Background:
This 207-nucleotide RNA was probed chemically with 2A3 and DMS. Source: RMDB library ARCHII, as collected in RNAgym. For DMS the reverse transcriptase was MarathonRT. The RNA was probed in 150 mM KOAc, 10 mM MgCl2 and 150 mM bicine (pH 8.5) at 24 C. High DMS reactivity at an A or C suggests that its Watson-Crick edge is free.
RNA sequence: GGGAACGACUCGAGUAGAGUCGAAAAUCGGAGGAGAUUCGUCUCCUCCGAAAAUCCGUCGUAGUCUAGGUGGUUAGGAUACUCGGCUCUCACCCGAGAGACCCGGGUUCGAGUCCCGGCGACGGAACCAAGCCUCAAAGGAGUUCGCUCCUUUGAGCACUGAUAUGAACUUCGGUUCAUAUCAGUGAAAAGAAACAACAACAACAAC
Reactivity to 2A3 in 0.01 (KOAc 150mM, MgCl2 10mM, bicine 150mM(pH8.5), 24C), signal-to-noise 2, nucleotides 027 to 156: u020c000g000g000a000g020g000a000g000a020u060u090c140g120u000c040u000c000c000u000c000c000g000a000a000a000a000u000c000c000g000u000c000g000u010a040g040u000c020u050a070g000g120u070g060g170u260u100a000g000g040a010u040a070c000u010c000g000g000c030u030c030u040c110a110c030c030c040g010a010g000a000g000a020c010c010c010g000g000g000u000u010c000g000a000g020u010c000c000c000g000g000c010g000a000c010g000g000a000a000c000c000a030a010g060c000c010u010c000a000a000a000g010g010a020g000u070u070c140g080c080u000c000c000u010u000u010g000a000g000
Reactivity to DMS in 0.01 (KOAc 150mM, MgCl2 10mM, bicine 150mM(pH8.5), 24C), signal-to-noise 2, nucleotides 027 to 156: u010c020g010g000a060g010g000a040g020a070u010u000c300g020u000c010u000c000c000u000c000c000g000a000a000a040a140u000c000c000g030u000c010g000u000a060g020u000c020u010a050g000g000u000g020g010u000u020a020g000g040a120u000a050c010u000c020g020g010c050u010c120u020c130a160c290c120c060g010a110g000a070g010a020c010c010c020g010g000g010u000u010c020g000a300g010u000c000c010c020g000g000c010g010a080c010g010g000a030a030c020c010a060a170g000c050c000u000c000a010a010a090g010g000a070g020u000u000c300g000c030u000c010c000u000u000u010g000a010g020